[RMDB]
RNA sequence: GGGAACGACUCGAGUAGAGUCGAAAAUUGAUCUUUCAGUAGCUUCUACCUAUUUUUUAGUCCGCAUCUUGCAAGAUAAGACUGGCGACUUUAUGUCUACAAUUAUUACUUCCUGCCAAACUGCUGUACGCUUUGCCGUUCGCGGCAAAGAAAAGAAACAACAACAACAAC
Reactivity to 2A3 in 0.01 (KOAc 150mM, MgCl2 10mM, bicine 150mM(pH8.5), 24C), signal-to-noise 6, nucleotides 027 to 129: u050u080g040a050u070c050u030u110u070c050a050g000u040a020g030c020u070u030c000u070a080c030c010u030a210u040u100u040u000u030u100a030g000u050c050c020g010c010a000u000c030u020u050g020c080a070a000g010a080u090a020a020g010a030c020u050g030g030c030g000a030c000u080u090u070a130u230g040u030c000u010a030c030a050a070u080u060a050u130u020a080c040u030u030c000c030u040g030c050c000a030a040a040c040u040g030c000u000g040u040a020c060g010
Reactivity to DMS in 0.01 (KOAc 150mM, MgCl2 10mM, bicine 150mM(pH8.5), 24C), signal-to-noise 3, nucleotides 027 to 129: u030u020g020a110u030c050u000u020u020c060a090g000u030a130g050c050u020u010c030u000a210c080c040u050a040u010u000u000u000u000u000a110g000u000c030c090g050c060a130u040c070u040u070g050c050a010a000g030a110u000a000a000g040a070c000u000g020g010c060g030a030c100u020u050u030a090u110g030u000c050u030a100c060a030a100u090u050a090u000u000a000c110u050u040c000c020u010g050c000c000a000a070a080c080u060g070c000u010g020u050a100c090g020